[RMDB]
RNA sequence: GGGAACGACUCGAGUAGAGUCGAAAAGGAGCUUGAUUCGUCAAGCUCCAAAAGUUACAGACCCGAUUCCUAGGGUUAACAAGAAGCUAUGCACCGAGGCAAAAAGGAAUGGAUUCGUCCAUUCCAAGAUGUACGUAGGGUUCGCCCUACGUACAUCAAAAGAAACAACAACAACAAC
Reactivity to 2A3 in 0.01 (KOAc 150mM, MgCl2 10mM, bicine 150mM(pH8.5), 24C), signal-to-noise 1, nucleotides 027 to 126: g000g000a000g010c000u010u000g000a000u020u010c030g000u000c060a000a000g000c000u000c000c000a000a000a000a030g000u010u090a070c030a080g100a110c000c000c000g020a050u030u050c000c000u010a020g000g000g010u000u060a030a010c010a020a020g190a060a010g030c040u070a010u220g020c030a020c030c100g070a040g060g010c000a020a000a030a040a050g040g000a030a010u010g000g000a030u040u110c220g040u000c070c000a000u000u000c000c000a010a000
Reactivity to DMS in 0.01 (KOAc 150mM, MgCl2 10mM, bicine 150mM(pH8.5), 24C), signal-to-noise 3, nucleotides 027 to 126: g010g000a020g010c000u000u000g000a040u000u000c190g030u000c000a000a000g000c000u010c000c000a010a020a040a100g010u000u020a040c300a140g000a020c010c000c000g020a160u000u000c000c020u000a180g000g010g000u000u000a030a070c090a130a060g000a080a140g000c050u000a060u010g010c080a060c050c040g020a060g000g010c130a030a060a030a150a050g010g000a000a000u000g010g000a060u000u010c170g000u000c010c000a010u000u000c010c000a010a080

An RNA of 177 nucleotides, treated with 2A3 and DMS and read out base by base. For 2A3 the reverse transcriptase was SuperScript II with manganese. For DMS, 2,085 sequencing reads were counted. DMS adducts were read by reverse transcription with MarathonRT.